[RMDB]
RNA sequence: GGGAACGACUCGAGUAGAGUCGAAAAGAUAUGGAGAUGGAACUACGAUACGAACUGCGUUGAAAUCGGAAACGAUGGAGCAGUCGUAUCGCCAUCUCCUAAGUCAAAACUACGGUUCGCCGUAGAACCUUUGUUUGCUGUUCGCAGCAAACAAAGGAAAAGAAACAACAACAACAAC
Reactivity to DMS in 0.01 (KOAc 150mM, MgCl2 10mM, bicine 150mM(pH8.5), 24C), signal-to-noise 1, nucleotides 027 to 126: g020a050u000a300u010g000g010a030g040a060u010g030g010a100a040c090u060a300c060g000a000u000a010c000g000a080a020c000u000g010c000g030u010u010g030a050a100a010u000c010g000g000a100a040a230c000g020a000u030g000g000a060g000c000a000g000u000c010g040u000a000u020c000g040c000c020a000u000c000u010c000c000u010a010a140g010u020c010a040a020a080a090c010u000a010c000g010g050u000u000c290g000c000c000g000u000a000g000a120a240
Reactivity to 2A3 in 0.01 (KOAc 150mM, MgCl2 10mM, bicine 150mM(pH8.5), 24C), signal-to-noise 2, nucleotides 027 to 126: g000a030u080a050u100g000g010a000g010a020u020g020g030a040a070c160u260a100c300g010a010u000a000c010g260a300a080c030u010g000c000g240u300u070g000a030a030a080u030c020g030g020a060a090a050c000g010a010u000g000g000a030g000c020a000g010u000c000g020u000a000u030c000g000c010c000a000u010c000u000c000c000u000a000a010g040u000c000a000a000a030a140c020u030a000c000g060g050u000u030c260g000c090c000g010u020a000g030a050a020